An RNA of 207 nucleotides, treated with 2A3 and read out base by base. The 2A3 profile rests on 1,467 reads. Values are in units of 0.01, from 0 to 300, in steps of 10. It was measured as part of the RMDB library RSTRND.
RNA sequence: GGGAACGACUCGAGUAGAGUCGAAAACCAACGAAGAGCUGGCUCUCGCUGCUUAAUCUAAACAAUUAAGUGAGCGCGCUUAUCGGAUUUUGCGCCUGCCCGGAUCCGAAGGCGUGGAGAAGGCAGGAUCGCCAAGGGAACAUGCCUGGGUUCCCGACAUCAAUUGUGCGUUCGCGCACAAUUGAUGAAAAGAAACAACAACAACAAC
Reactivity to 2A3 in 0.01 (KOAc 150mM, MgCl2 10mM, bicine 150mM(pH8.5), 24C), signal-to-noise 2, nucleotides 027 to 156: c010c000a040a030c090g060a090a090g040a020g070c080u070g140g000c010u020c020u040c070g020c060u030g020c000u010u020a020a010u010c020u050a080a040a030c000a010a040u020u010a010a010g010u050g300a020g000c020g010c000g010c010u040u110a120u140c000g100g000a060u060u030u070u240g000c010g010c020c030u040g000c010c010c000g070g060a030u000c000c010g020a030a060g140g040c120g030u110g030g020a060g010a040a020g010g020c010a010g010g040a040u160c020g020c040c040a140a090g010g000g000a040a000c010a060u170g050c000c040u020g050g040g000u000u030c000c010c000g000a010